[RMDB]
RNA sequence: GGGAACGACUCGAGUAGAGUCGAAAACAUGGAUCAAUUCAGUCCUAAACUUCUGUUACAUUGACGUGGCCUUAACAAGCUUUGAGCGUAUAUACGGUUACGACCCGGUGGUAUAUAUAGAUCAUGGCCGUAUCGAUGUUUUCGAACAUCGAUACGGAAAAGAAACAACAACAACAAC
Reactivity to DMS in 0.01 (KOAc 150mM, MgCl2 10mM, bicine 150mM(pH8.5), 24C), signal-to-noise 2, nucleotides 027 to 126: c060a060u000g020g020a140u000c060a070a080u020u010c040a040g000u020c060c050u030a100a120a150c090u000u000c000u030g000u020u020a060c180a050u010u010g010a040c070g000u000g000g010c000c000u000u010a040a120c130a090a190g010c010u010u020u010g000a050g020c060g020u010a000u000a030u000a000c050g030g020u010u010a070c110g010a070c070c070c080g020g000u000g010g010u000a010u000a040u000a010u000a110g000a080u000c050a030u000g010g000
Reactivity to 2A3 in 0.01 (KOAc 150mM, MgCl2 10mM, bicine 150mM(pH8.5), 24C), signal-to-noise 2, nucleotides 027 to 126: c020a030u090g160g010a140u040c000a050a080u250u000c010a030g050u080c020c030u150a080a070a000c010u140u000c030u060g050u080u090a100c060a070u020u060g000a020c020g050u050g030g000c010c000u060u060a070a060c070a040a060g030c010u100u060u090g090a070g020c000g020u000a030u000a010u000a070c030g050g080u100u050a050c050g040a110c060c010c030g110g020u050g000g070u030a070u000a000u000a000u020a080g020a040u000c000a040u060g090g040
Structure probing data (DMS and 2A3) for a 177-nucleotide construct. For DMS the reverse transcriptase was MarathonRT. For 2A3 the reverse transcriptase was SuperScript II with manganese. For DMS, 1,920 sequencing reads were counted. Conditions: 150 mM KOAc, 10 mM MgCl2 and 150 mM bicine (pH 8.5), 24 C. Reactivities are given for positions 27 through 126.